[RMDB]
RNA sequence: GGGAACGACUCGAGUAGAGUCGAAAAGCCGGUGAUUCGUCACCGGCAAAACCUUUGUGUAGCGUGUGUUGUCAGAAAGCAGGAGCCCAUUGGGCUCCGGCUUUCUUGGAUUUACACAUACGCUACACUCUGGUAAAGCUACGGAUUCGUCCGUAGCCACAUCAAUGGAGUUCGCUCCAUUGAUGUGAAAAGAAACAACAACAACAAC
Reactivity to 2A3 in 0.01 (KOAc 150mM, MgCl2 10mM, bicine 150mM(pH8.5), 24C), signal-to-noise 4, nucleotides 027 to 156: g000c000c000g020g000u010g010a050u060u100c190g020u010c160a000c000c000g000g020c010a010a010a000a000c010c000u020u030u000g010u000g000u000a000g010c020g000u000g000u000g000u060u200g030u060c010a010g010a000a000a000g000c030a030g020g010a000g010c010c030c130a300u280u300g010g000g000c000u020c010c020g000g010c010u000u000u000c000u000u090g030g010a050u040u100u300a010c010a000c000a010u030a010c000g000c000u010a000c000a000c000u000c010u000g000g010u070a150a050a000g000c000u000a000c000g010g010a030u000u110c220g040u020c070c010g000u010a000g000c000
Reactivity to DMS in 0.01 (KOAc 150mM, MgCl2 10mM, bicine 150mM(pH8.5), 24C), signal-to-noise 1, nucleotides 027 to 156: g030c020c000g060g050u000g020a010u000u010c180g010u000c000a010c000c010g000g000c000a000a010a020a010c010c010u000u000u010g030u010g030u000a010g020c010g030u000g040u000g010u000u010g020u010c050a060g010a020a030a000g020c010a030g020g030a000g020c000c000c020a300u000u020g080g040g000c000u000c000c010g000g030c010u000u000u000c010u000u010g030g020a130u010u010u000a060c050a000c020a040u000a050c000g010c000u000a020c000a000c000u000c030u000g000g020u000a050a100a110g020c000u000a000c010g000g000a090u010u000c300g000u000c010c000g040u000a010g020c010